Conditions: 150 mM KOAc, 10 mM MgCl2 and 150 mM bicine (pH 8.5), 24 C. The record gives the reactivity of an RNA of 207 nucleotides to 2A3 and DMS. In probing experiments dimethyl sulfate is read out at A N1 and C N3, which are open when not base-paired. Reactivities are given for positions 27 through 156.

RNA sequence: GGGAACGACUCGAGUAGAGUCGAAAAAGUCAAAAUAUUUGGCUGAAGGUUAGGAGGACCCUUUGUUGUUAGCAAGAAGCAGCAAUAAAAAAUUCUCUUUUAUUUGUCCAAAGUGCGACCACGAUUUCGAAGUGAGUUUGGACAGAUUGACUGCUGGCAAUGAUUGGGUUUUCGAACCCAAUCAUUGAAAAGAAACAACAACAACAAC
Reactivity to 2A3 in 0.01 (KOAc 150mM, MgCl2 10mM, bicine 150mM(pH8.5), 24C), signal-to-noise 2, nucleotides 027 to 156: a010g010u020c040a030a030a070a150u210a280u130u070u020g010g000c000u030g040a060a000g040g020u100u300a040g040g000a070g000g020a060c040c000c000u040u030u010g000u010u000g000u000u010a070g020c070a120a010g060a120a000g190c000a000g030c020a040a000u100a180a090a040a000a000a010u210u090c080u020c000u060u100u040u070a080u060u060u080g000u000c010c000a000a000a090g120u090g110c040g100a070c030c030a010c030g170a170u100u260u270c080g030a110a000g010u040g040a050g010u010u010u040g000g000a010c000a010g040a040u000u080g060a140c010u000g010c010u000g050g010
Reactivity to DMS in 0.01 (KOAc 150mM, MgCl2 10mM, bicine 150mM(pH8.5), 24C), signal-to-noise 1, nucleotides 027 to 156: a000g000u030c010a020a050a160a290u000a180u020u020u000g010g080c020u000g000a110a020g000g000u000u000a110g010g000a050g060g010a030c020c030c050u010u000u000g010u000u000g010u000u010a110g030c040a070a160g000a130a090g010c010a030g000c000a010a050u060a010a040a070a130a050a180u000u010c040u010c020u000u000u000u010a090u030u010u000g020u000c000c000a000a020a080g010u000g060c060g000a180c000c000a010c050g010a300u010u010u000c160g010a200a300g000u000g000a080g000u000u000u000g010g010a010c000a020g010a060u000u000g020a030c030u020g020c010u010g020g010